[RMDB]
Background:
Structure probing data (DMS and 2A3) for a 177-nucleotide construct. Source: RMDB library RFM100, as collected in RNAgym. Values cover nucleotides 27 to 126. High DMS reactivity at an A or C suggests that its Watson-Crick edge is free. DMS adducts were read by reverse transcription with MarathonRT. For 2A3 the reverse transcriptase was SuperScript II with manganese.
RNA sequence: GGGAACGACUCGAGUAGAGUCGAAAAGCGGCAAACCUUUGAGUUCUGAGGAACACGAAGUCACAUGAGGCUUAAUUUACUGGGUAAGCUAGCCUAACGAAGCAGAGCCCAAUAGCUCAUCCGAGAAAGCCUUAAUUGCAUUCGUGCAAUUAAGGCUAAAAGAAACAACAACAACAAC
Reactivity to DMS in 0.01 (KOAc 150mM, MgCl2 10mM, bicine 150mM(pH8.5), 24C), signal-to-noise 1, nucleotides 027 to 126: g030c070g000g000c020a100a160a090c080c000u010u000u010g000a140g000u000u000c000u010g030a200g000g060a030a070c000a120c000g000a000a020g000u000c060a040c090a050u020g000a000g000g000c030u000u060a060a060u020u100u040a040c070u010g000g000g000u000a090a000g090c010u000a020g000c000c010u010a070a040c130g090a050a060g020c000a050g080a110g010c000c000c030a030a080u010a060g000c040u010c060a050u030c050c050g030a090g010a150a060
Reactivity to 2A3 in 0.01 (KOAc 150mM, MgCl2 10mM, bicine 150mM(pH8.5), 24C), signal-to-noise 2, nucleotides 027 to 126: g020c010g050g000c030a070a040a080c000c020u000u000u130g150a110g050u020u010c010u000g120a130g020g140a030a000c000a000c090g030a000a000g000u040c010a070c000a190u060g010a000g070g000c000u040u030a060a020u080u050u040a080c080u000g090g000g000u000a050a050g000c000u080a050g000c000c000u040a050a030c090g020a070a000g040c000a000g020a010g010c000c000c000a000a000u060a000g000c000u000c020a040u110c080c000g040a000g080a140a170